[RMDB]
RNA sequence: GGGAACGACUCGAGUAGAGUCGAAAACACCUGACCAUCGAAAAAUACUGCAUUCGACCCGUAUGUAAAUGCGAUAUCCCUAAAGUUAGGUUCCAUAGUGAACACACGCAAUCCGGUAUUUUUGUAAACCGGAGCGUCCCACUUCUCAAAUAUUGUCCACCGAGUCUAAUUUCGAUUAGACUCGGUGAAAAGAAACAACAACAACAAC
Reactivity to 2A3 in 0.01 (KOAc 150mM, MgCl2 10mM, bicine 150mM(pH8.5), 24C), signal-to-noise 2, nucleotides 027 to 156: c010a020c000c020u010g020a020c000c030a050u090c020g080a060a000a030a080a000u110a130c020u060g010c000a030u050u040c040g020a110c090c090c020g100u100a070u120g040u020a010a120a050u050g040c020g040a040u030a170u180c050c010c010u090a150a140a010g070u040u100a040g040g000u050u020c040c010a100u090a060g110u090g050a110a000c030a000c000a010c090g000c010a040a080u000c000c000g000g020u030a130u110u120u040u160u200g120u060a160a000a000c000c000g000g000a000g000c000g010u000c050c020c000a010c030u140u080c020u050c060a040a110a060u270a080u100u150g010u000c010

Conditions: 150 mM KOAc, 10 mM MgCl2 and 150 mM bicine (pH 8.5), 24 C. Structure probing data (2A3) for a 207-nucleotide construct. For 2A3 the reverse transcriptase was SuperScript II with manganese. As a SHAPE reagent, 2A3 marks flexible, mostly unpaired nucleotides at the ribose 2'-OH. For 2A3, 768 sequencing reads were counted.